[RMDB]
RNA sequence: GGGAACGACUCGAGUAGAGUCGAAAACGGCGUCGUGCCGCUCAUCGUCAACCUGCUGCGCACCUACGAGUCGCUGCCGUCCGACAUCACGCUGUCGCGGCACUGGGUAGAGCAGUACGAGUACUCGCGCCGCAUGACUCUUCGGAGUCAUGCGGCGAAAAGAAACAACAACAACAAC
Reactivity to 2A3 in 0.01 (KOAc 150mM, MgCl2 10mM, bicine 150mM(pH8.5), 24C), signal-to-noise 2, nucleotides 027 to 126: c020g030g020c000g060u090c050g000u150g000c010c070g000c040u070c010a200u080c040g120u040c010a050a070c000c000u050g000c050u100g010c030g050c010a030c020c000u060a030c010g140a030g130u020c010g080c050u030g020c020c010g050u100c100c040g000a000c030a120u120c080a120c300g030c020u030g010u020c010g000c020g110g010c000a020c060u090g000g000g140u130a030g000a050g020c030a050g000u000a040c050g000a020g020u030a090c020u030c110g010
Record summary:
Chemical mapping of a 177-nucleotide RNA with 2A3. For 2A3, 783 sequencing reads were counted. For 2A3 the reverse transcriptase was SuperScript II with manganese. Conditions: 150 mM KOAc, 10 mM MgCl2 and 150 mM bicine (pH 8.5), 24 C. The data come from the RNA Mapping Database (RMDB), library OK1LIB. Reactivities are rounded to 0.1 and cut off at 0 and 3.